[RMDB]
Chemical mapping of a 177-nucleotide RNA with 2A3 and DMS. Source: RMDB library OK1LIB, as collected in RNAgym. The RNA was probed in 150 mM KOAc, 10 mM MgCl2 and 150 mM bicine (pH 8.5) at 24 C.

RNA sequence: GGGAACGACUCGAGUAGAGUCGAAAACGACGCUGCAGUCAGUAGUCUUGGUCCUUGAUGUUAUCAACACAAGUUACUGAUUUGAUAACAGUGGGCAGGCGUUGCAUAUGCACUUCCAGAGUGCCGAGGCCACUAAUAAUUUCGAUUAUUAGUGGCCAAAAGAAACAACAACAACAAC
Reactivity to 2A3 in 0.01 (KOAc 150mM, MgCl2 10mM, bicine 150mM(pH8.5), 24C), signal-to-noise 4, nucleotides 027 to 126: c020g010a010c010g000c040u040g000c020a050g040u070c010a020g000u050a010g020u020c020u030u070g080g060u110c030c000u060u120g060a110u030g090u300u140a070u080c020a010a020c030a030c020a170a130g040u120u040a070c010u040g090a160u040u060u120g070a060u110a090a020c040a060g080u140g010g050g010c020a020g080g000c010g050u040u080g000c010a050u090a080u210g010c010a000c000u090u080c060c010a090g030a000g130u020g000c000c010g040a070
Reactivity to DMS in 0.01 (KOAc 150mM, MgCl2 10mM, bicine 150mM(pH8.5), 24C), signal-to-noise 5, nucleotides 027 to 126: c080g000a110c030g030c010u010g010c050a090g000u000c020a050g010u010a040g000u030c010u000u010g020g000u010c070c150u000u000g010a040u000g000u020u040a030u000c010a000a000c300a100c040a030a050g000u010u050a060c060u010g010a050u010u030u020g010a080u020a060a080c020a060g010u020g010g010g000c030a060g000g000c090g010u020u030g010c100a100u040a060u020g020c020a020c010u010u020c170c090a170g000a060g010u000g010c010c210g000a170
The 2A3 profile rests on 2,322 reads.